[RMDB]
RNA sequence: GGGAACGACUCGAGUAGAGUCGAAAAGGGGUCAAGCUCGAGUGCUGAAGAGCUUUUGACGAGCUGAAGCCUCCACGGCUCGAUAAGCUCUCCAGCACUUAGACAAGCUUGACGGAGGCACCCAAAACCAUUGCUACCUUUCGAGGUAGCAAUGGAACAGUAGAGACACCUUCGGGUGUCUCUACUGAAAAGAAACAACAACAACAAC
Reactivity to 2A3 in 0.01 (KOAc 150mM, MgCl2 10mM, bicine 150mM(pH8.5), 24C), signal-to-noise 1, nucleotides 027 to 156: g060g000g000g010u020c020a010a010g010c000u010c010g020a030g000u010g000c010u000g000a030a000g000a010g010c130u090u060u110u130g120a050c000g010a000g000c000u080g020a110a000g050c000c030u050c020c000a000c000g000g000c000u000c000g030a060u060a300a000g000c010u000c000u020c010c000a000g000c000a000c010u020u010a000g000a020c010a010a000g000c010u010u000g000a000c000g000g000a000g020g000c020a040c010c010c000a020a090a000a020c000c000a010u000u000g000c000u000a000c000c010u130u070u150c300g090a010g000g000u000a000g000c010a000a020u000g000g010a010a010
Chemical mapping of a 207-nucleotide RNA with 2A3. 2A3 is a SHAPE reagent: it acylates the 2'-hydroxyl of flexible nucleotides of all four kinds. The data come from the RNA Mapping Database (RMDB), library RNAMAK. The 2A3 profile rests on 1,481 reads. 2A3 adducts were read by reverse transcription with SuperScript II with manganese.